[RMDB]
RNA sequence: GGGAACGACUCGAGUAGAGUCGAAAACACGAAGGUUGGCUAAUCCUGGUCGGACAUCAGGGGGUUAGUGCACUGGCAUAAGCCACCUUGGCGCUAAUAGAUACUAAUCGUAGCAUAGCUGAAUAAAAAUUUAUACUGCUUUCGAGCAGUAUAAAUUAAAAGAAACAACAACAACAAC
Reactivity to DMS in 0.01 (KOAc 150mM, MgCl2 10mM, bicine 150mM(pH8.5), 24C), signal-to-noise 7, nucleotides 027 to 126: c050a100c140g010a090a090g010g020u010u010g010g010c030u010a100a120u030c030c010u000g000g010u000c150g020g010a240c110a040u010c020a030g010g000g000g020g000u010u000a040g020u000g010c030a110c150u010g010g000c050a090u020a110a150g010c010c030a060c090c050u010u010g000g010c040g010c030u000a030a080u040a070g000a090u010a080c090u020a070a060u010c050g000u010a040g000c040a110u030a070g000c040u000g000a070a070u040a020a050a060
Reactivity to 2A3 in 0.01 (KOAc 150mM, MgCl2 10mM, bicine 150mM(pH8.5), 24C), signal-to-noise 7, nucleotides 027 to 126: c080a010c040g050a060a010g060g000u120u070g050g000c020u040a020a060u040c000c010u010g030g010u050c070g080g040a040c030a070u040c020a030g030g010g020g020g020u060u070a040g020u040g040c040a060c150u090g070g000c020a060u090a150a060g000c010c000a050c010c010u010u070g060g000c010g000c010u020a060a030u050a280g060a030u060a070c050u130a100a070u070c040g050u030a020g000c020a060u050a050g010c030u070g040a080a020u220a120a040a010
Chemical mapping of a 177-nucleotide RNA with DMS and 2A3. The RNA was probed in 150 mM KOAc, 10 mM MgCl2 and 150 mM bicine (pH 8.5) at 24 C. Reactivities are rounded to 0.1 and cut off at 0 and 3. Source: RMDB library OK1LIB, as collected in RNAgym. For 2A3, 7,301 sequencing reads were counted.